[RMDB]
RNA sequence: GGGAACGACUCGAGUAGAGUCGAAAAUUAAACUUUAAAUAGACAGGUCUGAGUGCCUGAACUUGCCUUUUCAUUUUACUUCAUCCUCCAAGGAGUUCAAUCACUUGGCGUGACUUCACUACUUUUAAUGGACAACAAUAUUCGUAUUGUUGUCCAUAAAAGAAACAACAACAACAAC
Reactivity to 2A3 in 0.01 (KOAc 150mM, MgCl2 10mM, bicine 150mM(pH8.5), 24C), signal-to-noise 9, nucleotides 027 to 126: u070u050a050a030a020c040u090u100u200a060a080a090u130a040g100a050c020a010g030g020u060c040u150g160a050g070u160g040c000c000u000g010a020a010c010u030u090g050c010c000u050u050u070u090c070a110u030u080u070u070a060c030u040u060c020a090u030c000c020u040c020c010a040a030g030g010a040g030u040u070c030a020a080u050c010a020c070u010u010g030g000c020g070u040g030a020c010u030u050c090a040c100u150a060c000u020u000u000u040a130
Reactivity to DMS in 0.01 (KOAc 150mM, MgCl2 10mM, bicine 150mM(pH8.5), 24C), signal-to-noise 4, nucleotides 027 to 126: u030u020a050a090a090c070u010u010u020a030a090a090u010a040g000a190c050a030g000g000u000c020u000g000a090g030u000g020c060c030u000g010a030a020c030u000u010g010c020c020u020u010u010u020c110a060u020u040u010u010a070c080u020u010c060a050u010c040c020u000c040c090a070a040g000g000a060g000u010u010c100a030a100u000c060a020c030u000u000g010g000c070g010u000g010a060c050u010u010c100a090c110u010a080c040u000u000u000u000a010
Conditions: 150 mM KOAc, 10 mM MgCl2 and 150 mM bicine (pH 8.5), 24 C. An RNA of 177 nucleotides, treated with 2A3 and DMS and read out base by base. The data come from the RNA Mapping Database (RMDB), libraries RFM100 and RFMREP. High DMS reactivity at an A or C suggests that its Watson-Crick edge is free.